[RMDB]
Source information: The record gives the reactivity of an RNA of 177 nucleotides to DMS. Source: RMDB library TTRINS, as collected in RNAgym. The RNA was probed in 150 mM KOAc, 10 mM MgCl2 and 150 mM bicine (pH 8.5) at 24 C. Values cover nucleotides 27 to 126.
RNA sequence: GGGAACGACUCGAGUAGAGUCGAAAAGAUAUGGAUUGGAGAGCUAACUGCAGCAUCUUUUGACGAUUGACGUUCGGAAACGAACGGAGAUCGAUAAGAUGCUGCAGUUAGCUCCCAAUCCUAAGUCGAUAGCGUAUAUCUUCGGAUAUACGCUAUCAAAAGAAACAACAACAACAAC
Reactivity to DMS in 0.01 (KOAc 150mM, MgCl2 10mM, bicine 150mM(pH8.5), 24C), signal-to-noise 4, nucleotides 027 to 126: g010a060u000a300u010g010g000a020u000u000g000g000a180g020a010g010c010u000a000a010c000u010g010c000a020g000c000a010u000c010u000u000u000u020g030a290c110g000a010u000u000g000a300c010g020u010u000c000g020g000a100a160a260c010g020a000a020c000g010g010a300g010a000u000c000g020a110u000a010a000g000a030u000g000c010u000g000c000a000g000u000u000a000g000c000u000c010c000c000a000a000u000c000c000u000a010a080g010u010c110